[RMDB]
Source information
Chemical mapping of a 177-nucleotide RNA with DMS and 2A3. The reactions ran in a buffer of 150 mM KOAc, 10 mM MgCl2 and 150 mM bicine (pH 8.5), at 24 C. DMS adducts were read by reverse transcription with MarathonRT.
RNA sequence: GGGAACGACUCGAGUAGAGUCGAAAAGAAAGAAAGAAAUGCCUUAUCUCCAAACUCAAAGUGGUACCAGCAGUGUGGAUGGUCAUCUGGUCGUUGCCGUGUUUGAGUUCUGGACCUGGAGCGUAAAGUGCUCCAUGAUAUUCGUAUCAUGGAGCACAAAAGAAACAACAACAACAAC
Reactivity to DMS in 0.01 (KOAc 150mM, MgCl2 10mM, bicine 150mM(pH8.5), 24C), signal-to-noise 3, nucleotides 027 to 126: g010a070a070a070g000a060a100a080g000a100a080a040u040g010c100c010u000u010a090u020c040u020c000c000a030a050a020c020u010c020a010a040a090g030u010g000g000u000a040c060c050a080g010c090a030g000u020g040u000g010g020a110u030g010g010u030c020a030u010c010u000g000g000u010c230g000u000u000g020c000c010g000u000g010u000u020u010g000a030g010u000u000c170u000g030g010a020c050c020u000g020g000a020g010c020g000u000a040a080a110
Reactivity to 2A3 in 0.01 (KOAc 150mM, MgCl2 10mM, bicine 150mM(pH8.5), 24C), signal-to-noise 8, nucleotides 027 to 126: g060a020a030a000g110a030a070a010g090a030a100a040u180g020c020c010u100u050a120u080c020u000c000c000a020a000a020c000u000c030a030a030a030g060u050g030g010u050a020c030c020a010g070c030a060g040u060g040u100g210g120a190u150g090g170u200c010a050u030c010u020g070g050u060c070g080u040u090g020c010c010g070u080g290u050u010u030g010a000g000u030u050c080u050g010g000a010c000c000u040g010g020a050g010c020g010u070a060a090a050